[RMDB]
RNA sequence: GGGAACGACUCGAGUAGAGUCGAAAAGAAGAAAAAGAAAUACGCGAGCCACGGAAAAGCCGGUCACCGUGGAGCGAAAUAAGCGGUCAAAGAAGACCGGCAAGGCUGAAGAAAAACUUCAGCCAAAACCAGGGUACCAUUUCGAUGGUACCCUGGUAAAAGAAACAACAACAACAAC
Reactivity to 2A3 in 0.01 (KOAc 150mM, MgCl2 10mM, bicine 150mM(pH8.5), 24C), signal-to-noise 1, nucleotides 027 to 126: g050a010a010g100a070a110a010a000a030g190a040a090a030u160a020c010g030c020g000a050g080c010c000a000c000g000g000a020a020a030a020g000c000c000g000g010u000c000a000c050c020g030u010g000g020a000g010c040g160a110a000a000u190a130a000g060c020g070g010u090c080a170a020a040g160a050a000g020a020c000c000g000g000c000a000a000g040g000c000u000g000a000a000g000a010a150a020a100a100c000u000u000c000a000g000c000c000a010a010a010